Overview
The record gives the reactivity of an RNA of 177 nucleotides to DMS. Conditions: 150 mM KOAc, 10 mM MgCl2 and 150 mM bicine (pH 8.5), 24 C.
RNA sequence: GGGAACGACUCGAGUAGAGUCGAAAACGACCUGCCGUCGGGCAUUUGCGCCACCUGGCGGACGAUCCUCUCUGGCUGGGCGAACGCGUCGUGGACCACCCACAGCGGGCAGCUGCCGCCGACCCGGCCAUCCGGUGCAGUUCGCUGCACCGGAUGGAAAAGAAACAACAACAACAAC
Reactivity to DMS in 0.01 (KOAc 150mM, MgCl2 10mM, bicine 150mM(pH8.5), 24C), signal-to-noise 1, nucleotides 027 to 126: c190g020a080c030c130u030g020c010c020g040u000c010g020g020g020c200a060u000u010u000g050c080g010c020c110a120c030c020u000g020g020c030g000g040a110c090g000a060u000c000c080u010c110u000c040u030g000g050c010u030g000g000g010c040g000a140a300c050g000c030g020u000c040g010u000g050g000a130c060c190a080c150c010c010a050c090a110g010c030g000g010g000c050a130g020c040u020g020c020c050g030c060c010g000a090c030c000c000g000g000
In probing experiments dimethyl sulfate is read out at A N1 and C N3, which are open when not base-paired. For DMS, 840 sequencing reads were counted.